[RMDB]
RNA sequence: GGGAACGACUCGAGUAGAGUCGAAAAGCACGUUCGACAGCCCAUCCCACCACGGGGGAGUCUGCGGAAAAGACAUCUGCGCGCCCUAGAACUAGUGCGGUAGCCGCUUGGUCAGAGGUGGCAUAAGCAUGGGAUUCCUAUUCGUAGGAAUCCCAUGAAAAGAAACAACAACAACAAC
Reactivity to DMS in 0.01 (KOAc 150mM, MgCl2 10mM, bicine 150mM(pH8.5), 24C), signal-to-noise 3, nucleotides 027 to 126: g030c070a030c080g000u010u000c040g010a130c140a110g000c020c030c010a140u010c020c010c010a100c110c070a070c150g000g000g000g000g020a100g020u010c060u010g010c030g020g000a060a050a070a090g000a090c090a060u010c030u000g030c060g030c060g020c020c030c020u000a080g000a080a050c070u010a050g020u000g010c010g000g000u010a120g010c030c030g000c050u000u000g000g000u010c070a070g020a060g010g020u000g000g020c040a120u000a050a080g000
Reactivity to 2A3 in 0.01 (KOAc 150mM, MgCl2 10mM, bicine 150mM(pH8.5), 24C), signal-to-noise 2, nucleotides 027 to 126: g000c020a000c070g010u080u090c050g100a070c050a040g050c000c000c000a050u070c010c000c000a050c040c010a050c070g020g000g000g020g020a030g040u100c070u060g000c000g050g040a050a140a020a050g130a040c050a070u010c030u060g010c070g010c000g020c010c000c000u040a050g020a110a020c050u020a030g050u010g040c020g000g030u040a010g070c000c020g000c060u060u070g060g020u060c040a060g020a010g110g000u030g000g000c010a030u120a140a020g040
The record gives the reactivity of an RNA of 177 nucleotides to DMS and 2A3. DMS adducts were read by reverse transcription with MarathonRT. The reactions ran in a buffer of 150 mM KOAc, 10 mM MgCl2 and 150 mM bicine (pH 8.5), at 24 C. High DMS reactivity at an A or C suggests that its Watson-Crick edge is free. The data come from the RNA Mapping Database (RMDB), library OK2TST.